The data come from the RNA Mapping Database (RMDB), library M2PK90.
Chemical mapping of a 177-nucleotide RNA with 2A3 and DMS.
Values cover nucleotides 27 to 126.
The RNA was probed in 150 mM KOAc, 10 mM MgCl2 and 150 mM bicine (pH 8.5) at 24 C.
DMS adducts were read by reverse transcription with MarathonRT.
RNA sequence: GGGAACGACUCGAGUAGAGUCGAAAAUCUAAGAGCGUAACACACACUCAGACUGUACGACAGUCUGACACACACAUAGGCUAGUGUAUCGUGUGUGUGAUAUCGAUGUAGCACGAAAAUGAAAGAAUAAACUAUCGCCAUUCGUGGCGAUAGUUUAAAAAGAAACAACAACAACAAC
Reactivity to 2A3 in 0.01 (KOAc 150mM, MgCl2 10mM, bicine 150mM(pH8.5), 24C), signal-to-noise 1, nucleotides 027 to 126: u070c070u050a100a000g000a000g070c060g050u020a010a010c020a000c010a000c000a000c070u000c020a000g000a000c010u000g000u160a090c150g200a070c180a000g000u000c000u010g000a000c010a000c000a000c000a000c000a060u090a160g220g000c160u110a100g020u010g020u110a080u200c050g010u010g000u010g000u010g030u000g000a010u010a040u140c010g020a030u110g110u110a010g000c040a000c070g110a010a010a040a040u220g090a180a130a090g090a070a030
Reactivity to DMS in 0.01 (KOAc 150mM, MgCl2 10mM, bicine 150mM(pH8.5), 24C), signal-to-noise 2, nucleotides 027 to 126: u000c010u010a070a120g000a090g000c180g010u000a160a070c040a040c020a030c020a040c060u000c000a010g010a010c010u010g010u000a160c260g000a160c020a000g010u010c000u000g010a050c300a040c110a040c080a030c040a030u000a130g040g030c150u000a020g010u000g000u000a110u000c070g010u000g010u010g000u020g020u000g010a070u000a080u010c020g000a080u000g010u000a030g010c030a130c070g010a020a080a050a070u010g000a070a040a090g000a090a060